Chemical mapping of a 177-nucleotide RNA with DMS and 2A3. The RNA was probed in 150 mM KOAc, 10 mM MgCl2 and 150 mM bicine (pH 8.5) at 24 C. The DMS profile rests on 2,255 reads.
[RMDB]
RNA sequence: GGGAACGACUCGAGUAGAGUCGAAAAGUAUUACCUCUUACUACGAAGCAUGCUUCGUAUUAUGAGGUGGUUAAUGAUUUUACUGCUAAUGAGGUUGAUCAGAUUAUCAGGAAGUAUAUUUUUGCAAGAUCUCUCAGAAGUUCGCUUCUGAGAGAUCAAAAGAAACAACAACAACAAC
Reactivity to DMS in 0.01 (KOAc 150mM, MgCl2 10mM, bicine 150mM(pH8.5), 24C), signal-to-noise 2, nucleotides 027 to 126: g000u000a040u000u000a020c000c000u000c000u000u010a000c080u000a000c000g000a020a010g000c050a100u010g010c000u000u000c010g000u000a000u000u010a010u000g000a010g010g000u000g010g010u000u010a110a140u020g000a080u000u010u000u010a070c030u000g000c120u000a080a100u000g000a150g000g020u010u010g010a090u000c030a050g000a110u000u000a050u000c020a080g020g000a030a070g010u010a050u000a050u000u000u000u010u010g020c130a130a110
Reactivity to 2A3 in 0.01 (KOAc 150mM, MgCl2 10mM, bicine 150mM(pH8.5), 24C), signal-to-noise 1, nucleotides 027 to 126: g040u030a040u030u060a010c000c000u000c030u040u020a000c000u000a010c000g010a000a000g070c120a140u110g020c020u010u010c000g000u000a000u000u000a000u010g000a010g000g020u020g010g010u020u020a080a010u050g120a040u000u060u070u140a070c000u010g050c000u070a040a100u150g050a020g150g000u140u110g030a060u060c010a030g030a080u080u010a000u060c030a020g020g120a050a020g070u030a070u000a000u160u170u010u120u060g070c040a150a000